The data come from the RNA Mapping Database (RMDB), library OK3TST. This 207-nucleotide RNA was probed chemically with 2A3 and DMS. DMS adducts were read by reverse transcription with MarathonRT. The 2A3 profile rests on 645 reads. For DMS, 1,717 sequencing reads were counted. 2A3 is a SHAPE reagent: it acylates the 2'-hydroxyl of flexible nucleotides of all four kinds. For 2A3 the reverse transcriptase was SuperScript II with manganese.

RNA sequence: GGGAACGACUCGAGUAGAGUCGAAAAUAACUGAAAGUUACUGUUUAAUAAGCAUUGAUUGUUUUCAUUUAGAAUACCCUGCCAUAGUUGAGUUUAAUGGCUCUCGCAGUAAUUUUCACUACUAUGUACUUUCCAAAGGCGGUAAAAACUUAGCCGAUAUAAUCACGGGAUUCGUCCCGUGAUUAUAAAAAGAAACAACAACAACAAC
Reactivity to 2A3 in 0.01 (KOAc 150mM, MgCl2 10mM, bicine 150mM(pH8.5), 24C), signal-to-noise 1, nucleotides 027 to 156: u000a000a000c040u030g000a000a000a010g000u000u000a000c000u010g040u000u030u130a110a210u210a100a040g050c000a010u100u150g070a150u110u110g080u120u110u080u120c040a200u060u100u150a060g000a010a030u060a130c010c000c040u050g000c010c030a010u010a050g090u110u120g060a010g000u100u170u240a180a000u100g100g000c000u010c000u000c030g000c000a000g000u030a000a000u000u020u000u000c000a010c030u080a050c000u010a020u120g050u100a170c020u030u020u020c010c050a100a150a020g010g000c030g000g100u080a200a300a000a000a000c040u060u010a010g000c020c000g000a010
Reactivity to DMS in 0.01 (KOAc 150mM, MgCl2 10mM, bicine 150mM(pH8.5), 24C), signal-to-noise 1, nucleotides 027 to 156: u000a060a160c060u000g000a070a060a050g000u020u000a010c000u000g010u000u000u000a090a140u000a070a070g020c040a130u000u000g010a090u000u000g010u000u000u000u000c100a220u010u000u000a140g000a130a120u000a040c050c050c010u000g020c040c040a100u000a080g050u000u000g000a140g000u000u000u010a060a100u000g060g020c050u000c030u000c090g000c030a100g020u000a010a060u000u000u000u020c020a080c030u000a150c050u000a050u030g000u010a140c110u000u000u030c020c020a300a110a120g000g070c040g030g000u000a030a040a050a090a040c100u000u000a100g030c020c090g000a230